[RMDB]
RNA sequence: GGGAACGACUCGAGUAGAGUCGAAAAAUCACUAUUAAGGUCCUGGAAAACACCAGGAACUGUGCUGAGUUAUCCAUAUGUAUGACCACAUUUUUCUCCUAGGGCAGAAGAGAACCCAAGGGUUCUUUUUGACUUUCUCAGCAUCCUGCUCCUCAGAGAGUACGUACGGAUUCGUCCGUACGUACUCAAAAGAAACAACAACAACAAC
Reactivity to 2A3 in 0.01 (KOAc 150mM, MgCl2 10mM, bicine 150mM(pH8.5), 24C), signal-to-noise 1, nucleotides 027 to 156: a000u090c030a010c060u210a050u300u100a160a030g030g000u020c000c010u000g010g010a060a300a030a090c050a080c030c000a040g020g000a000a020c000u020g000u030g000c050u020g020a010g070u040u100a160u200c080c060a020u060a070u220g100u050a020u140g030a070c090c070a080c010a110u080u050u000u220u110c040u100c030c040u040a050g000g010g000c020a020g050a060a010g040a000g000a000a000c000c010c030a060a060g100g000g020u020u040c000u010u040u030u060u030g080a100c010u000u200u050c020u010c050a000g000c020a020u040c000c050u070g020c050u040c000c000u090c040a020g100a020
Overview: An RNA of 207 nucleotides, treated with 2A3 and read out base by base. The reactions ran in a buffer of 150 mM KOAc, 10 mM MgCl2 and 150 mM bicine (pH 8.5), at 24 C. Values cover nucleotides 27 to 156. 2A3 adducts were read by reverse transcription with SuperScript II with manganese.